Structure probing data (DMS and 2A3) for a 177-nucleotide construct.
The RNA was probed in 150 mM KOAc, 10 mM MgCl2 and 150 mM bicine (pH 8.5) at 24 C.
For 2A3, 25,076 sequencing reads were counted.
It was measured as part of the RMDB library OK2TST.
For 2A3 the reverse transcriptase was SuperScript II with manganese.
RNA sequence: GGGAACGACUCGAGUAGAGUCGAAAAGCGUCGCCGGUGACCCGUCGCGCAUCGCGGCAGGCGCGGAACUUGAUCAGCGGGGUGAGGAUCCGCACGCAUUUCUGCGCCUCGACCUCGCCGCCAUCGAGUACUUUUAUGAUUUCGAUCAUAAAAGUACAAAAGAAACAACAACAACAAC
Reactivity to DMS in 0.01 (KOAc 150mM, MgCl2 10mM, bicine 150mM(pH8.5), 24C), signal-to-noise 9, nucleotides 027 to 126: g010c040g020u000c040g010c030c010g010g020u000g010a110c130c030c040g020u000c040g020c030g010c130a110u010c100g010c030g010g010c030a070g010g010c010g020c010g010g010a050a070c090u000u000g000a090u010c070a130g010c010g010g000g010g010u000g010a060g010g010a200u010c100c050g000c080a170c160g000c100a070u010u010u000c090u000g010c010g010c010c010u000c040g000a060c020c010u000c020g010c010c040g020c060c130a070u010c080g010a230
Reactivity to 2A3 in 0.01 (KOAc 150mM, MgCl2 10mM, bicine 150mM(pH8.5), 24C), signal-to-noise 8, nucleotides 027 to 126: g010c010g050u070c030g040c030c010g060g090u110g110a200c040c000c030g070u050c020g000c010g010c070a080u130c080g010c010g030g000c040a060g010g000c010g000c000g000g010a030a040c070u090u140g010a050u160c050a020g000c010g010g010g020g020u060g080a070g050g050a080u050c080c020g030c030a020c080g060c040a080u070u130u090c040u050g000c000g010c000c010u010c010g080a070c000c000u010c020g000c000c000g010c010c010a100u110c030g030a030